[RMDB]
RNA sequence: GGGAACGACUCGAGUAGAGUCGAAAAGAUGGCAGAGCGGAAAGAGCAUUAUUCAGCGCCCGUUCCUGACCGUGUGGCUUACCUGACCGCCGGUAUCGACUCCCAGCUGGACCGCUACGAAAUGCGCAGCAACUUGUGUGUUCGCACACAAGUUGCUAAAAGAAACAACAACAACAAC
Reactivity to DMS in 0.01 (KOAc 150mM, MgCl2 10mM, bicine 150mM(pH8.5), 24C), signal-to-noise 2, nucleotides 027 to 126: g030a070u010g000g020c060a100g020a040g030c060g000g030a060a070a120g000a090g000c030a020u000u000a100u010u010c090a060g010c050g000c050c040c010g000u010u010c020c000u010g010a050c020c010g020u000g040u000g010g000c050u010u000a080c150c130u000g010a100c020c030g020c010c010g000g010u010a040u000c080g010a070c080u000c020c030c060a210g010c020u010g010g000a110c050c030g000c000u010a160c170g010a040a070a050u010g020c030g010c190
Reactivity to 2A3 in 0.01 (KOAc 150mM, MgCl2 10mM, bicine 150mM(pH8.5), 24C), signal-to-noise 2, nucleotides 027 to 126: g060a040u070g000g080c080a020g010a010g090c000g020g070a060a080a020g130a050g030c020a010u070u080a100u050u210c040a010g000c020g020c050c020c000g020u010u010c020c000u060g060a090c000c020g040u020g030u020g130g030c030u080u070a180c060c050u110g100a280c000c010g010c000c000g000g050u030a060u100c020g040a100c020u010c000c010c000a000g000c010u010g020g010a060c000c000g000c020u040a040c040g050a040a030a060u100g010c070g040c040